[RMDB]
RNA sequence: GGGAACGACUCGAGUAGAGUCGAAAAUCGAUUUAUGGCAUUCACGUCGGGCAAAUGCUGCUGACCCGUGCUGAUAUGGAAGACCGUGAACGCUUCCUGAACGCCCGCGACACCCUGCGAGCGUUGAAUUUUAAAUCCUGUUCGCAGGAUUUAAAAUAAAAGAAACAACAACAACAAC
Reactivity to 2A3 in 0.01 (KOAc 150mM, MgCl2 10mM, bicine 150mM(pH8.5), 24C), signal-to-noise 3, nucleotides 027 to 126: u070c010g030a030u020u090u040a070u080g020g000c030a030u040u080c030a010c080g040u040c030g030g000g000c020a050a080a150u180g040c060u060g030c030u050g100a250c000c020c020g020u050g000c030u060g010a110u060a110u300g100g070a070a060g090a200c000c060g020u020g030a020a000c020g010c030u030u000c000c000u010g010a000a000c000g000c000c010c000g010c000g020a020c030a120c040c010c060u070g010c000g000a010g010c010g000u000u010g020a070
Reactivity to DMS in 0.01 (KOAc 150mM, MgCl2 10mM, bicine 150mM(pH8.5), 24C), signal-to-noise 7, nucleotides 027 to 126: u000c040g010a170u010u000u000a050u000g000g010c040a170u000u000c030a040c090g010u000c030g020g010g020c060a060a100a090u000g010c060u010g010c030u010g010a120c020c020c020g000u010g010c060u000g010a050u010a110u000g000g010a100a080g000a180c070c050g020u000g010a040a050c080g010c200u000u000c000c010u010g000a030a020c020g000c000c010c010g030c010g000a110c150a120c160c110c070u000g010c010g000a030g010c010g020u000u000g000a060